[RMDB]
RNA sequence: GGGAACGACUCGAGUAGAGUCGAAAAUCGAUUGAGGUAGUUUCGACGCGGACAAGGUCAGGCGGGAGGGCAACGUUUAAAAUCACGGGCUGCCAGGCGUCGCGCUCCGCCAGUUUUCGGGAAUAGCCGAACAGCUGUCAUUCGUGACAGCUGUUCGAAAAGAAACAACAACAACAAC
Reactivity to 2A3 in 0.01 (KOAc 150mM, MgCl2 10mM, bicine 150mM(pH8.5), 24C), signal-to-noise 2, nucleotides 027 to 126: u110c040g040a010u000u160g020a040g000g120u080a040g070u000u030u090c040g030a070c020g020c050g070g050a060c040a020a100g010g000u030c060a000g000g050c030g020g050g010a020g020g050g000c000a030a000c040g000u000u110u010a170a210a030a060u090c010a050c070g010g000g000c000u010g000c000c000a040g000g000c000g010u070c010g020c000g000c000u010c020c000g000c000c000a020g000u080u030u000u200c040g000g000g020a120a070u020a040g050c010
Reactivity to DMS in 0.01 (KOAc 150mM, MgCl2 10mM, bicine 150mM(pH8.5), 24C), signal-to-noise 1, nucleotides 027 to 126: u080c030g050a120u000u000g000a020g070g050u050a000g000u070u040u030c000g010a080c120g150c000g000g000a040c060a060a110g000g020u000c010a010g000g000c100g000g000g040a010g000g000g040c040a010a210c100g010u000u000u060a030a120a040a010u050c090a100c120g000g000g060c040u010g000c070c010a100g020g020c020g000u000c060g000c110g020c090u000c010c000g030c070c140a010g000u000u000u000u000c100g010g000g000a000a080u000a020g040c080